An RNA of 177 nucleotides, treated with DMS and 2A3 and read out base by base. For DMS the reverse transcriptase was MarathonRT. Reactivities are given for positions 27 through 126. 2A3 adducts were read by reverse transcription with SuperScript II with manganese. It was measured as part of the RMDB library TTRDEL. Conditions: 150 mM KOAc, 10 mM MgCl2 and 150 mM bicine (pH 8.5), 24 C.
RNA sequence: GGGAACGACUCGAGUAGAGUCGAAAAGAUAUGGAGUUACGUCGAUAAGCUGAAUGUCGGAAACGACAUCAGCUUUUGACGACGGGCUCCUAAGUCAAAGGGUAGGGACGUUCGCGUCCCUACCCAACAGUGGCUAAUACUUCGGUAUUAGCCACUGAAAAGAAACAACAACAACAAC
Reactivity to DMS in 0.01 (KOAc 150mM, MgCl2 10mM, bicine 150mM(pH8.5), 24C), signal-to-noise 2, nucleotides 027 to 126: g000a080u010a300u000g000g010a030g010u010u010a140c000g020u000c010g010a150u000a010a030g000c000u000g000a100a040u000g000u000c000g000g000a100a090a180c010g010a020c000a020u000c010a010g000c010u000u000u010u000g020a180c030g000a000c020g000g000g010c000u010c000c000u000a010a070g000u000c060a110a070a150g000g000g010u000a010g000g000g000a010c000g020u000u010c220g020c000g000u000c000c010c020u000a000c010c040c000a000a020
Reactivity to 2A3 in 0.01 (KOAc 150mM, MgCl2 10mM, bicine 150mM(pH8.5), 24C), signal-to-noise 1, nucleotides 027 to 126: g020a020u050a030u120g000g000a000g060u030u090a300c000g020u000c020g010a160u010a280a040g000c010u000g060a300a110u010g090u010c010g000g000a070a030a060c000g000a010c000a010u010c010a000g000c010u020u010u010u030g030a000c020g000a000c020g000g050g000c010u020c000c000u040a000a030g020u030c060a010a100a110g000g000g000u000a010g000g000g000a000c010g020u050u080c260g040c000g070u000c010c020c000u000a000c000c000c010a000a020